[RMDB]
RNA sequence: GGGAACGACUCGAGUAGAGUCGAAAAGACGACUUUCCCCUAUUGGUUGGGAAAAGUCCCGGAACCAGGAAAUGGGAAAGAGACGGUAGAAAAGAGCGAGCCUCCCAGUUUUCGAGUAGUCCCGGACGACCGCGUACCUUCGGGUACGCGAAAAGAAACAACAACAACAAC
Reactivity to 2A3 in 0.01 (KOAc 150mM, MgCl2 10mM, bicine 150mM(pH8.5), 24C), signal-to-noise 3, nucleotides 027 to 129: g020a010c070g020a050c010u000u000u000c050c000c000c000u040a140u080u270g080g050u020u020g010g020g000a000a120a050a070g180u010c020c010c000g040g130a010a020c000c000a030g000g040a020a200a080u090g010g000g000a040a050a000g060a000g020a030c020g020g050u110a010g130a050a100a040a000g050a030g030c040g010a000g000c000c020u000c000c010c020a010g020u050u040u020u050c030g000a000g010u040a010g050u040c000c000c000g000g050a040c040g040a040c010
Reactivity to DMS in 0.01 (KOAc 150mM, MgCl2 10mM, bicine 150mM(pH8.5), 24C), signal-to-noise 4, nucleotides 027 to 129: g000a090c070g020a280c020u000u000u020c050c010c000c040u110a170u110u040g040g010u020u040g040g040g000a020a130a150a200g000u020c000c050c020g000g000a080a050c030c010a030g030g020a070a090a110u020g020g030g090a040a010a030g000a110g060a000c060g050g010u050a170g020a000a020a000a000g030a080g030c050g040a090g040c100c010u030c000c000c020a040g010u010u000u040u000c000g010a090g030u040a070g040u020c040c030c020g110g020a100c000g000a070c110
The record gives the reactivity of an RNA of 170 nucleotides to 2A3 and DMS. The RNA was probed in 150 mM KOAc, 10 mM MgCl2 and 150 mM bicine (pH 8.5) at 24 C.